This 177-nucleotide RNA was probed chemically with 2A3 and DMS. Reactivities are given for positions 27 through 126. For DMS the reverse transcriptase was MarathonRT. For DMS, 8,223 sequencing reads were counted.

RNA sequence: GGGAACGACUCGAGUAGAGUCGAAAAGAGGAUUCAACGAGCUUCGUAGCAACGAUAGCAACGUAGCUUUUGCUACGACCCGAGCUAUCGAGGGAAGCUACGUCCCGUGCUCGAGGGAAGAAUCCGAGAUUUAGCUAGUGUUCGCACUAGCUAAAUCAAAAGAAACAACAACAACAAC
Reactivity to 2A3 in 0.01 (KOAc 150mM, MgCl2 10mM, bicine 150mM(pH8.5), 24C), signal-to-noise 6, nucleotides 027 to 126: g150a020g000g000a010u000u010c010a050a050c040g010a000g010c010u060u060c020g020u020a000g010c020a070a080c020g020a020u010a010g010c010a040a070c020g010u010a000g000c000u130u210u240u300g010c000u000a010c010g050a050c010c050c010g010a030g000c000u000a010u020c010g000a100g060g110g060a140a020g010c000u020a020c010g030u060c030c030c010g040u070g000c010u020c000g030a100g060g090g040a090a190g010a010a030u000c000c010g010a030
Reactivity to DMS in 0.01 (KOAc 150mM, MgCl2 10mM, bicine 150mM(pH8.5), 24C), signal-to-noise 6, nucleotides 027 to 126: g020a260g000g010a030u000u010c000a130a170c020g000a030g010c030u000u010c020g030u000a020g010c020a100a170c040g000a010u000a000g000c010a110a170c020g010u000a000g000c000u000u010u020u010g030c000u000a010c020g000a100c120c130c110g010a150g010c010u000a010u000c020g020a120g010g000g010a130a100g000c020u000a020c010g000u000c080c060c090g010u010g010c020u000c020g010a110g010g020g010a120a110g010a020a020u000c000c000g000a120